[RMDB]
RNA sequence: GGGAACGACUCGAGUAGAGUCGAAAAGAUAUGGAUGUAGGCCGAUAAGACGGUGUCGGAAACGACACCCGUCUUUUGACGGCUGAGGUCCUAAGUCAAAACACGACAAGCUUCGGCUUGUCGUGAACGUGAAAAGAGGGUUCGCCCUCUUUUCACGAAAAGAAACAACAACAACAAC
Reactivity to DMS in 0.01 (KOAc 150mM, MgCl2 10mM, bicine 150mM(pH8.5), 24C), signal-to-noise 3, nucleotides 027 to 126: g010a010u000a300u000g000g010a010u010g020u000a250g000g000c000c000g020a220u000a010a010g000a030c010g010g010u000g010u000c000g010g000a080a060a160c010g000a020c000a000c080c040c060g010u000c000u000u000u010u000g010a170c080g010g010c000u000g000a120g000g000u000c000c000u000a040a150g000u000c030a080a070a090a250c000a000c010g010a020c010a010a010g010c000u000u010c270g040g000c000u010u000g000u000c000g010u000g000a000a060
Reactivity to 2A3 in 0.01 (KOAc 150mM, MgCl2 10mM, bicine 150mM(pH8.5), 24C), signal-to-noise 1, nucleotides 027 to 126: g000a010u080a040u090g020g000a020u250g040u070a010g020g010c020c030g050a130u070a170a000g000a000c010g010g010u000g010u020c010g020g000a070a050a030c000g000a000c010a000c020c010c000g000u000c000u000u030u010u120g130a050c010g000g050c000u000g010a010g020g000u000c010c020u010a110a000g040u020c050a070a040a040a060c020a010c000g000a000c010a000a000g000c020u070u180c280g130g000c000u020u000g000u000c000g020u000g000a010a000